Structure probing data (DMS and 2A3) for a 177-nucleotide construct.
Values cover nucleotides 27 to 126.
For 2A3, 666 sequencing reads were counted.
It was measured as part of the RMDB library 15KREP.
The reactions ran in a buffer of 150 mM KOAc, 10 mM MgCl2 and 150 mM bicine (pH 8.5), at 24 C.

[RMDB]
RNA sequence: GGGAACGACUCGAGUAGAGUCGAAAAGCUGAAGACAAGAAAGCAAAAAUUGUCAGUGCUAUGCAAACUAUGUUGUUUGGUAUGAUUAAGAAGCUCGACAACGAUGUUCUUAAUGGUAUCAUUUCUACAGACUGUUAAUGUUCGCAUUAACAGUCUGAAAAGAAACAACAACAACAAC
Reactivity to DMS in 0.01 (KOAc 150mM, MgCl2 10mM, bicine 150mM(pH8.5), 24C), signal-to-noise 2, nucleotides 027 to 126: g010c000u000g010a130a160g010a080c030a010a010g010a070a160a190g060c210a040a020a090a120a120u000u000g000u000c010a070g000u010g010c030u000a110u040g000c140a070a080a120c130u010a090u010g030u050u020g000u020u000u000g010g000u000a020u000g010a020u010u000a000a000g000a020a040g000c030u000c010g000a140c300a110a120c090g040a020u000g010u010u010c000u000u020a010a000u000g000g000u000a010u000c020a140u000u010u000c050u000a110
Reactivity to 2A3 in 0.01 (KOAc 150mM, MgCl2 10mM, bicine 150mM(pH8.5), 24C), signal-to-noise 1, nucleotides 027 to 126: g000c000u060g040a090a000g010a000c010a040a000g080a190a050a060g160c050a040a100a000a050a080u020u030g000u010c020a000g030u050g050c030u080a100u080g020c010a070a010a060c030u120a090u240g020u050u040g060u080u040u010g040g010u010a040u060g150a000u140u010a060a000g010a030a000g180c030u040c010g060a060c060a100a080c090g030a060u050g040u030u000c010u000u000a010a000u000g020g000u000a010u020c010a000u000u150u020c040u030a010